RNA sequence: GGGAACGACUCGAGUAGAGUCGAAAAGAGACACAUAGGGAUUGUGAUUUUAAUAAACCACUCAUUGAGUGGCCACUUACUGAGUAUGAUUUUACUGAUUAUAAGGUACAACUCUUUGAGAAGUACUAGACUUACUGGUUCGCCAGUAAGAAAAGAAACAACAACAACAAC
Reactivity to DMS in 0.01 (KOAc 150mM, MgCl2 10mM, bicine 150mM(pH8.5), 24C), signal-to-noise 9, nucleotides 027 to 129: g000a090g010a020c040a030c030a000u000a060g060g030g020a120u050u020g030u000g020a080u030u020u020u030a070a070u040a050a090a130c050c050a100c020u010c000a060u030u040g000a020g050u030g000g000c010c010a060c140u020u020a070c000u000g000a050g020u040a050u050g010a030u020u030u010u030a010c050u040g020a090u020u020a060u000a060a070g030g000u050a050c040a010a060c020u030c060u000u000u000g040a020g020a080a210g000u040a000c030u030a050g010a220
Reactivity to 2A3 in 0.01 (KOAc 150mM, MgCl2 10mM, bicine 150mM(pH8.5), 24C), signal-to-noise 9, nucleotides 027 to 129: g050a000g020a000c000a000c010a030u090a030g080g080g040a110u050u030g020u020g080a100u010u050u050u130a190a150u150a070a060a020c020c000a020c010u020c010a150u090u180g010a010g010u000g000g020c000c000a080c000u070u110a030c040u040g030a010g030u050a080u150g160a160u050u090u080u110a030c010u000g020a040u050u140a090u060a190a050g010g000u040a070c010a060a060c040u000c000u050u060u100g020a020g000a110a030g010u010a040c020u010a020g020a030